[RMDB]
RNA sequence: GGGAACGACUCGAGUAGAGUCGAAAAGCUGAGCAUAUUGAAUCUAUUACUUUGAUGGGUGGUGGUACAUUUGGAAAUUGGACGCCUACAGCAGAAUUCAAUAUUUGGGUAGAUGCUGAAGCAGCGAUGCGGCAAGUAUAUUCGUAUACUUGCCGCAAAAAGAAACAACAACAACAAC
Reactivity to 2A3 in 0.01 (KOAc 150mM, MgCl2 10mM, bicine 150mM(pH8.5), 24C), signal-to-noise 2, nucleotides 027 to 126: g000c050u060g010a010g000c030a060u130a040u190u070g020a010a050u130c040u060a080u060u110a190c030u140u180u180g130a140u040g000g020g010u030g000g040u040g060g000u030a050c000a030u060u060u110g080g020a100a120a130u100u030g040g000a030c000g030c000c010u040a050c010a070g000c000a000g030a020a010u030u050c040a050a050u030a240u170u210u050g040g010g000u060a070g020a140u030g000c000u010g090a040a000g060c060a000g000c000g080a000
Reactivity to DMS in 0.01 (KOAc 150mM, MgCl2 10mM, bicine 150mM(pH8.5), 24C), signal-to-noise 2, nucleotides 027 to 126: g010c050u020g000a100g030c070a040u000a040u010u010g000a070a050u000c060u010a070u040u000a070c140u020u030u030g030a170u000g000g000g000u010g000g000u010g000g000u000a040c080a050u000u030u010g010g000a060a040a050u010u010g010g020a080c120g010c040c000u000a170c050a000g000c020a030g000a090a090u010u010c040a000a010u000a060u020u040u030g000g000g000u000a030g010a250u000g000c000u000g000a160a070g010c050a040g000c050g000a120

Chemical mapping of a 177-nucleotide RNA with 2A3 and DMS. Conditions: 150 mM KOAc, 10 mM MgCl2 and 150 mM bicine (pH 8.5), 24 C. The DMS profile rests on 2,623 reads. For DMS the reverse transcriptase was MarathonRT. Reactivities are given for positions 27 through 126. 2A3 adducts were read by reverse transcription with SuperScript II with manganese.